[RMDB]
RNA sequence: GGGAACGACUCGAGUAGAGUCGAAAAAUAGGGCACCACCACCGUAUAUUCCGCUACCAGAACCGCUAUGGGAAUUGAGAAGACGCUUUCCAUCAGUUACACGCACGGUGCUCUUACAGUGUAUACGCAUUUAAUGCGACUUCGGUCGCAUUAAAUGAAAAGAAACAACAACAACAAC
Reactivity to 2A3 in 0.01 (KOAc 150mM, MgCl2 10mM, bicine 150mM(pH8.5), 24C), signal-to-noise 2, nucleotides 027 to 126: a010u110a000g020g000g020c010a010c020c000a000c010c050a020c010c030g040u040a060u010a020u200u000c010c010g000c010u070a130c030c020a050g010a120a060c030c050g000c050u040a090u070g000g000g060a040a040u070u110g080a140g080a170a030g070a050c040g000c020u020u030u000c020c000a020u030c040a030g010u040u030a020c060a000c060g060c020a020c080g000g060u010g020c010u000c010u030u050a060c040a020g010u000g020u080a050u030a140c060g040
Reactivity to DMS in 0.01 (KOAc 150mM, MgCl2 10mM, bicine 150mM(pH8.5), 24C), signal-to-noise 4, nucleotides 027 to 126: a110u000a030g000g010g010c010a030c020c030a180c160c050a090c130c050g010u010a030u000a150u000u000c010c030g020c110u000a090c060c020a110g020a060a080c100c060g010c090u010a080u000g020g000g000a030a060u020u020g000a100g000a110a110g020a080c090g010c120u000u000u010c010c020a060u010c050a100g000u010u010a030c070a060c030g010c080a060c110g010g040u000g000c030u000c010u010u010a050c070a080g020u000g000u000a040u000a100c120g000
Chemical mapping of a 177-nucleotide RNA with 2A3 and DMS.
It was measured as part of the RMDB library OK2TST.
The 2A3 profile rests on 2,179 reads.